Chemical mapping of a 207-nucleotide RNA with 2A3 and DMS.
DMS adducts were read by reverse transcription with MarathonRT.
DMS (dimethyl sulfate) methylates the pairing face of unpaired adenines and cytosines.
For DMS, 3,210 sequencing reads were counted.
For 2A3, 652 sequencing reads were counted.
The RNA was probed in 150 mM KOAc, 10 mM MgCl2 and 150 mM bicine (pH 8.5) at 24 C.
RNA sequence: GGGAACGACUCGAGUAGAGUCGAAAAUGGAAUUUCCACAUAUUUUGCUAACUGUUUGUUUUAAGAGUGAGUAUAUUCAAUGCAGGCUGUCCCAACUGUUGUCCAGGUCUGACAAUGACACUGUGGUUCACAAUCAGUGACACCACUCUGCACGCUAUAGUGGAAAAUCAUUCGUGAUUUUCCACUAAAAAGAAACAACAACAACAAC
Reactivity to 2A3 in 0.01 (KOAc 150mM, MgCl2 10mM, bicine 150mM(pH8.5), 24C), signal-to-noise 2, nucleotides 027 to 156: u080g080g030a040a090u060u070u030c040c030a040c010a000u170a100u060u110u100u130g040c030u060a120a240c050u030g060u080u080u050g090u040u130u210u050a040a010g040a050g010u040g030a020g030u040a030u010a030u150u140c040a080a050u050g020c000a010g000g000c000u010g030u070c010c010c000a020a050c030u040g130u190u070g030u060c000c020a030g000g050u000c010u000g080a090c060a130a190u100g030a030c010a020c080u040g000u020g050g010u050u080c050a000c000a050a240u270c110a070g000u000g020a010c020a000c060c040a010c010u000c020u010g000c010a040c010g110c010u240a040
Reactivity to DMS in 0.01 (KOAc 150mM, MgCl2 10mM, bicine 150mM(pH8.5), 24C), signal-to-noise 2, nucleotides 027 to 156: u000g000g020a110a140u000u010u000c020c010a120c100a140u000a120u000u010u010u000g000c010u010a040a130c110u000g020u010u020u020g020u000u000u000u000a040a060g010a080g000u010g000a060g030u000a110u000a050u000u010c000a090a090u000g020c030a050g020g050c070u010g040u000c000c030c010a070a090c070u000g010u000u000g000u010c010c060a180g020g000u010c050u000g010a090c110a060a100u000g010a080c010a030c010u020g000u000g010g040u000u000c020a000c000a120a180u000c300a150g020u000g000a010c070a020c000c000a000c020u010c020u010g020c070a080c030g020c100u010a200